[RMDB]
Source: RMDB library M2PK90, as collected in RNAgym. Structure probing data (2A3 and DMS) for a 177-nucleotide construct. For DMS, 4,307 sequencing reads were counted. For DMS the reverse transcriptase was MarathonRT.
RNA sequence: GGGAACGACUCGAGUAGAGUCGAAAAGCCUCUAGCGUUUGCAAAACGCUGUUUGCGCAAUGAUCUGGAUUUAGCGCAAGUAGGUCCGAAAUCCAGAUCUACAUUUCGGACAACCGCGCUAAUUAAAAUUAAGAAUAGUCUUCGGACUAUUCUUAAUAAAAGAAACAACAACAACAAC
Reactivity to 2A3 in 0.01 (KOAc 150mM, MgCl2 10mM, bicine 150mM(pH8.5), 24C), signal-to-noise 2, nucleotides 027 to 126: g020c000c000u000c050u030a000g000c000g000u030u060u160g190c050a160a040a060a000c010g000c000u030g040u000u170u060g030c020g000c010a040a110u140g030a080u070c040u060g070g040a010u030u080u180a030g000c040g000c030a020a000g100u120a020g110g100u000c020c020g030a000a010a000u020c050c020a010g010a040u000c000u010a020c020a020u010u020u080c020g010g010a030c010a050a030c040c050g020c000g000c080u010a050a040u120u070a210a200a050
Reactivity to DMS in 0.01 (KOAc 150mM, MgCl2 10mM, bicine 150mM(pH8.5), 24C), signal-to-noise 4, nucleotides 027 to 126: g000c020c020u000c120u010a030g020c010g020u000u000u010g020c250a110a090a030a020c010g010c000u000g010u000u000u000g010c070g030c050a110a080u010g010a100u000c020u010g000g000a110u000u010u000a040g000c000g000c010a060a080g020u000a080g010g000u000c000c010g000a020a020a030u000c100c100a100g000a100u010c070u010a060c170a060u010u000u000c010g000g000a010c000a070a060c130c150g000c020g000c010u000a010a040u000u000a040a050a090